[RMDB]
RNA sequence: GGGAACGACUCGAGUAGAGUCGAAAAGACCAAGUAUCGACCUGUGGCGGAAAAUUUCCAAAAAUUAGCAAAGCAAGACAUUAGACGUCUCCACUAUGUUAACACUAAGGAUGCUAGGGGGUUUUUUACAACUCAACACCAGAGUGUAGGUAGGGAGCAUAUGUACGUUAUUCGUAACGUACAUAUGAAAAGAAACAACAACAACAAC
Reactivity to DMS in 0.01 (KOAc 150mM, MgCl2 10mM, bicine 150mM(pH8.5), 24C), signal-to-noise 5, nucleotides 027 to 156: g020a180c020c020a110a150g020u000a080u000c030g010a060c040c020u010g020u000g010g040c020g000g000a060a050a090a110u010u000u000c040c020a010a090a110a090a120u000u000a080g000c050a060a110a060g010c100a090a090g020a070c020a100u000u010a130g000a140c160g010u010c010u000c010c050a090c020u000a070u000g010u000u000a060a060c030a050c060u010a110a140g000g010a070u010g020c040u000a080g030g040g020g010g020u000u000u000u000u000u010a060c020a040a050c010u000c010a040a020c020a030c030c010a110g010a070g010u000g020u010a040g010g030u000a030g010g010g010a080g020
Reactivity to 2A3 in 0.01 (KOAc 150mM, MgCl2 10mM, bicine 150mM(pH8.5), 24C), signal-to-noise 7, nucleotides 027 to 156: g040a010c010c010a030a020g040u040a090u150c050g030a060c020c020u060g030u080g070g010c020g000g060a030a040a050a120u100u070u070c060c020a070a060a020a040a090u150u130a050g020c040a050a050a030g050c020a050a000g040a060c040a070u120u160a050g060a140c080g060u020c000u000c020c010a180c040u030a020u090g070u120u090a090a010c040a010c070u030a060a050g040g010a060u050g020c060u100a100g040g000g000g000g050u020u010u000u010u040u080a060c040a040a030c010u020c040a060a030c010a030c020c010a010g020a010g090u030g020u030a020g000g050u010a010g020g010g010a020g000